An RNA of 177 nucleotides, treated with DMS and 2A3 and read out base by base. DMS adducts were read by reverse transcription with MarathonRT. It was measured as part of the RMDB library OK2TRN.
RNA sequence: GGGAACGACUCGAGUAGAGUCGAAAAGCGCGGCGUUUUUCUCUGCGCGCUGAAGCUGGCGCUCUUUCAUGCCGGCUUCACCUGGCUGACAUUGCGCAUAUUCCGCGUGCACUUCGUGUAUGCCACGCGGCCCUAUAGCUUUCGAGCUAUAGGGCCGAAAAGAAACAACAACAACAAC
Reactivity to DMS in 0.01 (KOAc 150mM, MgCl2 10mM, bicine 150mM(pH8.5), 24C), signal-to-noise 2, nucleotides 027 to 126: g000c020g030c030g010g040c120g010u000u000u010u010u000c050u010c120u000g000c040g030c030g030c150u000g000a030a030g020c020u010g000g020c000g040c210u010c110u010u030u010c210a090u020g010c020c010g000g000c060u000u000c040a030c100c030u010g000g010c020u010g000a070c050a050u010u020g020c020g000c040a080u010a170u000u000c050c070g030c060g030u000g030c020a050c080u000u010c130g010u010g010u010a110u010g000c030c030a040c090g010
Reactivity to 2A3 in 0.01 (KOAc 150mM, MgCl2 10mM, bicine 150mM(pH8.5), 24C), signal-to-noise 2, nucleotides 027 to 126: g010c020g000c050g060g010c060g050u050u060u020u300u030c050u010c030u080g020c040g000c010g030c080u030g000a010a000g010c010u020g000g000c030g010c070u070c100u080u280u160c090a070u210g000c010c000g000g010c000u030u010c000a000c000c020u030g040g000c020u060g010a040c010a060u160u140g010c010g000c020a030u030a110u260u010c040c060g010c030g040u030g000c040a030c070u120u120c120g060u030g010u020a060u130g030c030c000a030c030g050